[RMDB]
RNA sequence: GGGAACGACUCGAGUAGAGUCGAAAAUGACAGUGUACAGGCGCGAAAGCGUCUGACAAUUAGCAAUGACUGUAUGCUAAUUGUCUAUUGUGAAAACAAUAGAAUGCUGUCUAACAGUCAUUGAUACGAUCUAGAGGUAUUUCGAUAUUUCUAGAUCAAAAGAAACAACAACAACAAC
Reactivity to 2A3 in 0.01 (KOAc 150mM, MgCl2 10mM, bicine 150mM(pH8.5), 24C), signal-to-noise 8, nucleotides 027 to 126: u060g000a000c000a000g000u000g000u030a010c000a000g000g000c000g000c000g040a050a020a020g000c000g000u000c000u000g000a000c000a000a000u000u000a000g000c000a000a030u060g000a000c000u000g000u010a010u040g000c000u000a000a000u000u000g000u000c000u000a000u000u010g000u000g080a050a020a000a010c000a000a000u000a000g000a000a000u020g000c000u000g000u000c000u000a010a000c000a000g000u000c000a010u020u220g060a030u040a070c090
Reactivity to DMS in 0.01 (KOAc 150mM, MgCl2 10mM, bicine 150mM(pH8.5), 24C), signal-to-noise 8, nucleotides 027 to 126: u010g000a000c000a000g020u000g010u010a080c010a010g000g010c000g000c000g010a130a070a160g000c000g020u000c000u000g000a000c000a010a010u000u000a000g010c000a020a230u000g000a010c000u000g010u000a170u000g000c000u000a000a000u000u000g000u000c000u000a000u000u000g010u000g000a130a080a150a020c000a000a000u000a000g000a030a010u010g010c000u000g010u000c000u000a080a020c000a000g000u000c000a190u040u040g000a120u030a100c230

Record summary
An RNA of 177 nucleotides, treated with 2A3 and DMS and read out base by base. The reactions ran in a buffer of 150 mM KOAc, 10 mM MgCl2 and 150 mM bicine (pH 8.5), at 24 C. Reactivities are given for positions 27 through 126. Source: RMDB library OK1LIB, as collected in RNAgym.